[RMDB]
RNA sequence: GGGAACGACUCGAGUAGAGUCGAAAAACAAUAGCCUCACUACCAUCAAGCGAUACUGCUGCUUACGAGAAACAAGGGAUGCUGCGCACGCUGAUUAAAGUCACGUUCGGUUAUCCUGCGAUUUUUGCUCACAUCCCCGUUUCGACGGGGAUGUGAGAAAAGAAACAACAACAACAAC
Reactivity to DMS in 0.01 (KOAc 150mM, MgCl2 10mM, bicine 150mM(pH8.5), 24C), signal-to-noise 1, nucleotides 027 to 126: a140c090a200a040u000a010g050c000c010u020c170a070c060u000a140c050c040a040u010c040a080a050g000c000g000a000u000a170c030u040g000c000u000g000c020u050u000a000c100g040a120g020a000a000a000c160a030a300g010g010g090a000u000g060c100u000g000c300g070c120a110c000g100c290u000g030a070u000u000a000a180a100g000u000c000a000c060g000u000u000c000g000g000u040u050a070u040c060c000u000g000c300g000a040u000u000u020u090u040g000
Reactivity to 2A3 in 0.01 (KOAc 150mM, MgCl2 10mM, bicine 150mM(pH8.5), 24C), signal-to-noise 2, nucleotides 027 to 126: a000c090a010a020u210a090g000c040c020u060c020a030c000u130a040c000c060a110u090c110a070a000g020c010g040a100u080a120c100u050g050c030u030g010c000u090u080a050c000g030a030g090a080a120a000c000a020a000g000g000g010a020u060g000c020u030g000c000g000c000a030c060g020c110u010g000a090u070u180a280a090a010g110u030c000a000c000g010u000u000c100g000g020u020u040a020u070c000c000u030g010c050g020a040u000u030u000u040u110g100